This 170-nucleotide RNA was probed chemically with 2A3 and DMS. 2A3 adducts were read by reverse transcription with SuperScript II with manganese. DMS adducts were read by reverse transcription with MarathonRT. The data come from the RNA Mapping Database (RMDB), library 15KLIB. The reactions ran in a buffer of 150 mM KOAc, 10 mM MgCl2 and 150 mM bicine (pH 8.5), at 24 C.
RNA sequence: GGGAACGACUCGAGUAGAGUCGAAAACAACUGUUAUCUUGCCACUGCAUUGUUAACACUCCAACAAAUAGAGUUGAAGUUUAAACCACCUGCUCUACAAAGGGCUGGUGAAGCUGCUAACUUUUGUACGGGAGAUGCUUCGGCAUCUCCAAAAGAAACAACAACAACAAC
Reactivity to 2A3 in 0.01 (KOAc 150mM, MgCl2 10mM, bicine 150mM(pH8.5), 24C), signal-to-noise 4, nucleotides 027 to 129: c000a000a010c070u060g060u020u070a160u060c080u090u120g020c010c020a070c100u080g040c000a050u030u000g030u100u050a100a050c020a010c050u000c010c020a050a020c030a050a200a080u240a070g200a000g040u040u030g070a000a000g000u020u000u180a100a030a030c010c020a000c010c010u020g030c000u010c000u050a090c030a060a170a060g000g020g000c000u060g000g020u000g020a000a020g020c020u050g000c010u010a010a000c000u030u040u010u120g080u060a050c080g040
Reactivity to DMS in 0.01 (KOAc 150mM, MgCl2 10mM, bicine 150mM(pH8.5), 24C), signal-to-noise 3, nucleotides 027 to 129: c170a080a150c190u070g010u000u000a040u000c040u000u070g030c100c070a160c170u000g070c160a040u010u060g030u080u000a050a090c120a110c090u010c000c070a050a080c080a080a000a030u070a200g050a060g030u040u060g010a090a000g020u000u000u000a020a170a000c070c010a030c000c010u000g060c030u020c040u020a050c300a080a110a060g120g030g070c130u030g110g000u030g010a000a000g020c010u030g020c100u030a060a060c030u100u000u000u000g030u000a010c000g060